[RMDB]
RNA sequence: GGGAACGACUCGAGUAGAGUCGAAAAGGGUUGCAGGACAGAUUCUGACUUCUCCGUUGUUGCUAAGAUUUAGACUUCCAAAUAGUAGAAUUGAGUCUUUCACUCCUCAUGAAUGUUUUAGACCUAUGCAUUAUUGUAACUUCGGUUACAAUAAUGCAAAAGAAACAACAACAACAAC
Reactivity to DMS in 0.01 (KOAc 150mM, MgCl2 10mM, bicine 150mM(pH8.5), 24C), signal-to-noise 1, nucleotides 027 to 126: g000g010g000u030u000g020c080a080g010g020a040c080a250g010a090u000u000c030u000g020a050c040u000u000c020u020c090c150g000u000u000g000u010u000g010c020u020a100a050g010a080u000u000u000a040g000a100c030u000u020c030c080a070a080a070u000a050g020u000a040g030a020a070u010u000g010a110g000u000c060u010u020u000c010a010c080u000c000c010u000c060a090u000g000a050a100u000g010u020u000u000u000a090g000a120c020c010u010a120u000
Chemical mapping of a 177-nucleotide RNA with DMS. Source: RMDB library RFMREP, as collected in RNAgym. Conditions: 150 mM KOAc, 10 mM MgCl2 and 150 mM bicine (pH 8.5), 24 C.